[RMDB]
RNA sequence: GGGAACGACUCGAGUAGAGUCGAAAAUGUAAGUUUUCUACCUGAAGGAGCCUCAGUGCUCGCAUGUCCUGACUCCCGUAUUAGAAACCUGAUUUUCGAGUUUACAGCAGGACUUGACCUUUUACCGCUAAUGCGUUACCUUCGGGUAACGCAUUAGAAAAGAAACAACAACAACAAC
Reactivity to 2A3 in 0.01 (KOAc 150mM, MgCl2 10mM, bicine 150mM(pH8.5), 24C), signal-to-noise 4, nucleotides 027 to 126: u210g020u140a090a190g010u010u000u070u050c020u050a110c070c010u030g090a110a060g110g040a010g030c020c050u280c190a180g040u210g160c020u010c010g020c020a020u060g020u020c000c000u050g060a190c030u050c000c110c010g010u060a110u090u050a040g070a050a060a040c070c090u130g100a220u030u020u010u100c040g000a030g030u050u080u090a020c030a040g010c000a000g030g010a030c000u000u030g050a040c000c000u020u020u070u210a110c060c050g030
Reactivity to DMS in 0.01 (KOAc 150mM, MgCl2 10mM, bicine 150mM(pH8.5), 24C), signal-to-noise 2, nucleotides 027 to 126: u040g000u020a070a090g000u020u000u000u010c000u030a120c130c050u000g000a170a100g010g000a020g020c070c010u040c120a080g000u030g020c050u010c080g000c120a050u000g010u000c040c020u010g010a100c050u010c060c040c090g020u000a040u010u000a090g000a020a020a000c110c080u000g010a110u010u000u000u010c000g000a080g010u020u040u000a040c160a120g000c060a000g010g010a080c030u000u000g000a090c110c030u000u000u000u010a140c080c120g030
Chemical mapping of a 177-nucleotide RNA with 2A3 and DMS. For DMS, 2,707 sequencing reads were counted. The reactions ran in a buffer of 150 mM KOAc, 10 mM MgCl2 and 150 mM bicine (pH 8.5), at 24 C. DMS adducts were read by reverse transcription with MarathonRT.